An RNA of 177 nucleotides, treated with 2A3 and DMS and read out base by base.
The 2A3 profile rests on 7,437 reads.
2A3 is a SHAPE reagent: it acylates the 2'-hydroxyl of flexible nucleotides of all four kinds.
The data come from the RNA Mapping Database (RMDB), library OK2TRN.
RNA sequence: GGGAACGACUCGAGUAGAGUCGAAAACAUGUCACGUGACAUUCUAAAGUGGAUCGGUAUACACCUAUAAUGUGACCGUAGGACGAUGAGUCGAUGAGGCAUUAAGCGUGACUCAAUGACAAGGAGCGAGUGUUAGUGGAUUCGUCCACUAAUAUUCAAAAGAAACAACAACAACAAC
Reactivity to 2A3 in 0.01 (KOAc 150mM, MgCl2 10mM, bicine 150mM(pH8.5), 24C), signal-to-noise 4, nucleotides 027 to 126: c030a020u050g000u000c000a000c030g020u050g030a010c010a030u040u000c010u060a020a010a010g020u020g030g030a030u020c010g000g000u040a060u020a060c050a010c010c030u070a040u050a110a130u090g030u020g040a080c040c000g050u240a260g000g120a020c040g030a080u200g050a010g020u030c010g020a090u080g040a040g020g000c000a000u020u030a010a000g020c000g010u000g000a000c010u010c020a010a050u050g020a020c010a040a030g050g000a030g070c030
Reactivity to DMS in 0.01 (KOAc 150mM, MgCl2 10mM, bicine 150mM(pH8.5), 24C), signal-to-noise 5, nucleotides 027 to 126: c070a050u000g000u000c010a050c090g010u000g000a070c080a030u010u000c070u010a040a030a100g010u010g010g010a080u000c050g000g010u000a050u010a160c060a050c060c080u020a190u020a150a300u000g020u000g010a060c050c190g000u000a300g000g000a050c060g010a160u020g010a300g020u000c020g030a120u000g020a200g010g000c020a040u000u000a060a090g030c080g010u000g000a010c000u000c020a020a040u000g000a020c040a040a040g000g000a030g010c090